[RMDB]
RNA sequence: GGGAACGACUCGAGUAGAGUCGAAAACAACACGCUAUUUCAUCAUGGAAAUAGAUCUACCGUGCCAAAGGGAGGUAAGAAAUAGUGAAAUUGGAAAGCUUCUCCACGCCUCAAGAAAAAAAAAAUGACCAGCCCAUUAAUUCGUUAAUGGGCUGGUAAAAGAAACAACAACAACAAC
Reactivity to 2A3 in 0.01 (KOAc 150mM, MgCl2 10mM, bicine 150mM(pH8.5), 24C), signal-to-noise 2, nucleotides 027 to 126: c010a000a030c000a000c060g000c020u010a000u010u020u010c080a200u030c020a090u140g200g090a020a000a080u070a110g010a000u030c010u060a070c030c030g020u070g060c020c030a100a030a030g130g060g020a010g000g000u090a100a110g040a010a060a010u040a000g030u040g160a120a120a150u190u060g120g040a010a080a070g020c020u060u040c000u010c000c000a040c050g020c010c000u070c100a030a050g180a130a020a000a000a000a000a000a000a010a050u100g010
Reactivity to DMS in 0.01 (KOAc 150mM, MgCl2 10mM, bicine 150mM(pH8.5), 24C), signal-to-noise 1, nucleotides 027 to 126: c120a090a070c180a060c050g030c000u000a000u000u030u000c030a080u000c200a010u000g000g000a000a000a000u050a040g030a060u130c110u090a030c270c070g010u000g000c110c060a040a100a090g000g000g000a010g000g030u000a090a060g000a040a070a010u060a020g110u010g010a030a090a220u000u000g010g000a000a040a140g030c030u000u020c180u000c000c000a070c150g000c020c000u000c010a220a140g010a020a000a000a020a000a000a240a020a000a070u060g000
Record summary
The record gives the reactivity of an RNA of 177 nucleotides to 2A3 and DMS. The reactions ran in a buffer of 150 mM KOAc, 10 mM MgCl2 and 150 mM bicine (pH 8.5), at 24 C. For DMS, 1,124 sequencing reads were counted. Reactivities are given for positions 27 through 126. The 2A3 profile rests on 1,285 reads.